[RMDB]
RNA sequence: GGGAACGACUCGAGUAGAGUCGAAAAAAUUUUUUAGGAUUUUUUGGCGAUUUUUUGACGGGUGUCCGACGGGGGUAUCCGCCAGUUCAGGGUGUCCCCUCUCUCCCGCUGGAUUGAUGCGAUCGGGUCUUCAAUGUACAUUCGUGUACAUUGAAGAAAAAGAAACAACAACAACAAC
Reactivity to DMS in 0.01 (KOAc 150mM, MgCl2 10mM, bicine 150mM(pH8.5), 24C), signal-to-noise 1, nucleotides 027 to 126: a020a000u000u000u000u090u020u000a220g010g010a020u010u010u000u010u010u010g010g010c020g010a050u000u020u020u010u000u020g000a100c000g000g020g030u000g000u020c080c060g020a100c140g000g000g000g000g000u020a000u020c010c000g010c030c070a120g010u030u000c130a090g010g000g020u000g020u000c010c000c010c000u010c070u020c040u000c000c020c020g030c050u000g010g010a070u000u000g010a110u010g010c040g000a070u030c050g000g010g000
Reactivity to 2A3 in 0.01 (KOAc 150mM, MgCl2 10mM, bicine 150mM(pH8.5), 24C), signal-to-noise 2, nucleotides 027 to 126: a000a010u230u080u100u100u100u160a220g000g090a050u040u050u060u000u010u100g100g000c000g010a010u050u040u030u030u070u230g020a030c020g020g010g010u030g000u110c080c070g000a060c070g020g000g000g000g010u020a010u000c020c000g010c040c030a080g090u130u170c140a020g000g030g000u010g050u050c020c020c060c000u000c000u000c000u020c000c000c000g060c020u000g020g020a050u060u090g010a040u080g040c000g030a050u030c010g010g020g100